The record gives the reactivity of an RNA of 207 nucleotides to 2A3 and DMS. For 2A3 the reverse transcriptase was SuperScript II with manganese. Reactivities are rounded to 0.1 and cut off at 0 and 3. Reactivities are given for positions 27 through 156.
RNA sequence: GGGAACGACUCGAGUAGAGUCGAAAAGAACAAGAAUGGAGUAACGCGCACACCAGGUAUGAAUUAAAAUACAAAAAAGUUGAUGCUGAACAAAUAAUCUAUAACUCGUUCACCAAAUGUGCUUCUGGGUCACAUAUUAAUAUAACAGGUACCAACGCUCCAAUUAUCUAUUCGUAGAUAAUUGGAGAAAAGAAACAACAACAACAAC
Reactivity to 2A3 in 0.01 (KOAc 150mM, MgCl2 10mM, bicine 150mM(pH8.5), 24C), signal-to-noise 4, nucleotides 027 to 156: g010a020a000c040a030a030g060a040a040u060g000g020a050g030u080a100a030c040g010c010g000c050a010c000a020c030c040a010g010g020u050a030u080g020a020a000u160u160a150a050a030a030u160a050c120a020a080a030a130a090a060g050u050u040g030a070u100g020c050u030g020a040a010c040a020a140a090u160a080a020u090c100u080a060u070a200a080c030u020c080g000u020u020c030a040c050c020a050a120a120u050g000u020g030c010u060u040c060u070g000g050g010u030c020a000c000a010u120a020u120u160a130a040u180a040u050a100a040c030a030g030g060u200a040c210c000a030a000c060g010
Reactivity to DMS in 0.01 (KOAc 150mM, MgCl2 10mM, bicine 150mM(pH8.5), 24C), signal-to-noise 2, nucleotides 027 to 156: g030a080a090c050a080a110g010a160a070u010g030g030a100g010u000a030a150c070g030c060g040c030a090c020a090c040c050a130g000g040u010a040u000g010a080a070u020u020a110a070a050a110u010a190c050a000a110a050a090a100a130g020u000u010g020a050u000g000c030u010g000a070a090c040a040a090a070u000a040a080u000c020u010a020u000a020a050c040u000c010g030u000u000c010a060c010c020a020a050a070u000g020u010g020c030u000u000c070u000g020g000g030u010c000a040c030a070u000a100u010u010a020a100u000a070u000a070a040c030a080g000g020u000a020c040c050a040a040c070g020